This 177-nucleotide RNA was probed chemically with DMS and 2A3. The 2A3 profile rests on 3,086 reads. Values are in units of 0.01, from 0 to 300, in steps of 10. The DMS profile rests on 2,176 reads. The reactions ran in a buffer of 150 mM KOAc, 10 mM MgCl2 and 150 mM bicine (pH 8.5), at 24 C. Values cover nucleotides 27 to 126. For 2A3 the reverse transcriptase was SuperScript II with manganese.

RNA sequence: GGGAACGACUCGAGUAGAGUCGAAAAGAUAUGGAUUCGUGGAGAACCGUGCCGAGGUCGGAAACGAUACAGCACGGGUUCGUUGAAACGAAUCCUAAGUCAAAAGUGUCCUCUUCGGAGGACACAACAUUGAUCCUCUCUUCGGAGAGGAUCAAUGAAAAGAAACAACAACAACAAC
Reactivity to DMS in 0.01 (KOAc 150mM, MgCl2 10mM, bicine 150mM(pH8.5), 24C), signal-to-noise 2, nucleotides 027 to 126: g000a060u000a300u000g000g000a000u000u000c000g010u000g000g020a080g000a010a020c000c000g010u000g010c000c000g020a250g000g000u010c000g000g000a150a100a200c010g000a010u000a010c010a010g010c010a000c020g000g030g000u000u010c000g000u010u010g020a190a110a020c010g010a010a000u010c010c010u000a020a060g010u000c010a100a070a080a100g010u000g010u000c000c000u000c000u000u010c220g010g010a010g010g000a010c010a000c010a050a070
Reactivity to 2A3 in 0.01 (KOAc 150mM, MgCl2 10mM, bicine 150mM(pH8.5), 24C), signal-to-noise 1, nucleotides 027 to 126: g040a010u070a020u210g010g000a000u000u010c000g000u040g000g050a020g000a020a020c000c010g020u010g000c020c010g130a180g050g000u020c030g000g010a030a050a100c020g000a010u000a020c030a000g030c000a010c000g000g000g000u010u010c000g030u080u010g000a030a000a000c010g000a000a000u000c000c000u000a090a010g040u010c030a030a020a070a150g020u000g000u030c030c000u000c000u050u050c280g130g000a030g000g030a010c000a000c010a000a020